[RMDB]
RNA sequence: GGGAACGACUCGAGUAGAGUCGAAAAGGUGCCAAGGUGAUCAACGUCUCCACGAUCACCUGCCUACCCGCCGAUCGGAUGGUCGACCAGGCCGCGCUGGGCGCGGCGAUCCGGUAUGCGGCGGUGGCGCUGUUGGUGUCUUCGGACACCAACAGCGAAAAGAAACAACAACAACAAC
Reactivity to DMS in 0.01 (KOAc 150mM, MgCl2 10mM, bicine 150mM(pH8.5), 24C), signal-to-noise 1, nucleotides 027 to 126: g000g000u000g030c070c070a160a050g010g040u000g010a000u000c010a230a130c270g000u000c020u000c110c030a160c260g010a040u000c060a000c000c000u000g010c040c040u000a170c240c010c000g010c000c010g000a010u010c000g000g000a000u000g010g010u000c010g000a080c030c000a040g010g010c030c170g020c130g000c000u010g000g010g030c140g030c060g030g010c000g000a000u000c000c000g040g000u020a070u000g010c000g000g010c020g020g000u010g000g000
Chemical mapping of a 177-nucleotide RNA with DMS.
The data come from the RNA Mapping Database (RMDB), library OK2TRN.